[RMDB]
An RNA of 177 nucleotides, treated with DMS and 2A3 and read out base by base. DMS adducts were read by reverse transcription with MarathonRT. Source: RMDB library OK2TST, as collected in RNAgym. Conditions: 150 mM KOAc, 10 mM MgCl2 and 150 mM bicine (pH 8.5), 24 C. Values cover nucleotides 27 to 126.
RNA sequence: GGGAACGACUCGAGUAGAGUCGAAAAAGGGUUGUGUGUCGUAGGCACUUAUACUUACGAGAUUGCACAUACUUUUGCAUGUAUGGUUGAAACUGCAAAUAUGCAAAUGCAGCAAGAUAUGGAAACAAUACCUAUGAUUUUUCGAAAUCAUAGGUAUAAAAGAAACAACAACAACAAC
Reactivity to DMS in 0.01 (KOAc 150mM, MgCl2 10mM, bicine 150mM(pH8.5), 24C), signal-to-noise 9, nucleotides 027 to 126: a060g010g010g020u000u000g030u010g020u000g010u000c010g010u000a020g010g010c080a090c240u000u010a100u010a080c010u000u000a020c010g010a110g010a160u010u010g000c020a050c050a070u000a120c050u000u000u000u000g010c070a040u000g010u000a060u000g010g010u000u000g010a090a090a100c080u000g000c020a020a080a100u010a080u000g010c120a040a080a100u000g000c030a040g000c050a040a090g010a060u000a050u000g010g010a120a070a090c170a090
Reactivity to 2A3 in 0.01 (KOAc 150mM, MgCl2 10mM, bicine 150mM(pH8.5), 24C), signal-to-noise 6, nucleotides 027 to 126: a000g080g020g020u090u010g020u010g010u020g030u020c010g000u000a010g020g000c050a010c050u130u130a160u070a100c000u040u010a000c010g020a010g110a250u080u220g030c030a020c000a050u130a090c040u040u020u040u070g020c020a030u050g020u100a050u100g150g050u070u100g080a150a110a010c030u030g010c020a030a060a110u190a050u090g030c000a020a010a080u070g000c020a030g030c010a040a010g020a090u090a040u160g110g060a090a050a020c030a040